[RMDB]
RNA sequence: GGGAACGACUCGAGUAGAGUCGAAAAGGUCGAGCGCUCGCGCAAGCUUGGGUACGCGCUCAACGACCGCCAAGCCACGCCGGGCGCGAUGUCGAUCGGACUCGCGAUGCGCAACCGCUACGGCGCGGCUCGGGUUAGUAUUCGUACUAACCCGAGCAAAAGAAACAACAACAACAAC
Reactivity to 2A3 in 0.01 (KOAc 150mM, MgCl2 10mM, bicine 150mM(pH8.5), 24C), signal-to-noise 3, nucleotides 027 to 126: g020g000u010c010g000a010g000c010g010c010u050c110g060c000g000c090a060a050g080c120u160u090g090g000g030u070a050c080g010c010g000c020u040c050a020a090c090g020a010c010c020g010c030c010a020a000g020c000c010a000c080g000c020c000g000g000g000c000g010c060g000a020u020g050u080c020g000a020u000c000g000g080a160c080u070c110g130c020g070a040u150g120c000g000c020a000a030c020c020g020c030u110a180c050g010g010c030g000c020g020
Reactivity to DMS in 0.01 (KOAc 150mM, MgCl2 10mM, bicine 150mM(pH8.5), 24C), signal-to-noise 4, nucleotides 027 to 126: g010g010u000c010g000a050g010c010g020c010u000c150g010c050g000c100a130a120g020c130u000u000g010g010g000u000a120c160g000c030g030c050u010c080a100a080c090g000a040c040c030g010c020c020a100a040g010c010c000a020c010g000c000c000g000g000g000c000g010c070g020a070u010g010u000c000g010a040u010c060g010g000a180c150u010c100g010c020g000a050u010g030c020g010c020a060a120c160c020g010c010u000a050c030g000g020c000g010c000g000

Conditions: 150 mM KOAc, 10 mM MgCl2 and 150 mM bicine (pH 8.5), 24 C. An RNA of 177 nucleotides, treated with 2A3 and DMS and read out base by base. For DMS the reverse transcriptase was MarathonRT. Reactivities are given for positions 27 through 126. The data come from the RNA Mapping Database (RMDB), library OK2TST.